[RMDB]
RNA sequence: GGGAACGACUCGAGUAGAGUCGAAAAAGUGCACUAGGUACGCCUAGUGCACAUUCCAGGACAUACUGCUGAGGAUUUCAAAAAUGCAGUUGGAGUCCUCAACUGGAUAGGCUACGGCCUAUCCAGAAAAAGACUUGGUUGUUCGCAACCAAGUCAAGUGCAAUUUAAUGUUCGCAUUAAAUUGCACAAAAGAAACAACAACAACAAC
Reactivity to 2A3 in 0.01 (KOAc 150mM, MgCl2 10mM, bicine 150mM(pH8.5), 24C), signal-to-noise 2, nucleotides 027 to 156: a010g010u000g020c000a000c000u010a000g020g010u040a030c180g070c020c000u000a000g000u000g020c010a000c000a000u000u000c000c000a010g030g050a030c020a080u170a090c070u170g080c030u030g010a010g030g040a080u080u100u110c060a070a050a120a120a160u240g050c080a040g020u020u020g010g030a020g010u000c020c020u010c010a030a060c010u000g020g000a000u000a000g010g020c000u030a020c290g060g010c010c000u010a000u000c000c000a000g000a010a000a000a000a000g000a000c000u000u000g000g000u000u000g010u030u090c090g010c060a000a010c000c000a000a000g010u000c000a000a030
Reactivity to DMS in 0.01 (KOAc 150mM, MgCl2 10mM, bicine 150mM(pH8.5), 24C), signal-to-noise 1, nucleotides 027 to 156: a200g010u000g000c000a070c010u000a000g010g000u000a050c300g070c000c000u000a020g030u010g010c010a000c010a020u000u000c010c020a070g000g000a160c060a040u000a070c060u010g000c090u020g000a070g060g030a060u010u000u000c050a030a070a070a190a160u000g050c130a090g000u000u000g000g000a100g000u010c000c010u010c010a080a140c030u020g010g000a000u000a000g000g050c030u000a150c300g080g040c000c000u010a000u000c000c000a000g000a000a080a160a090a090g010a020c000u000u040g010g020u000u000g000u010u010c280g000c010a040a020c010c000a000a020g020u010c000a000a040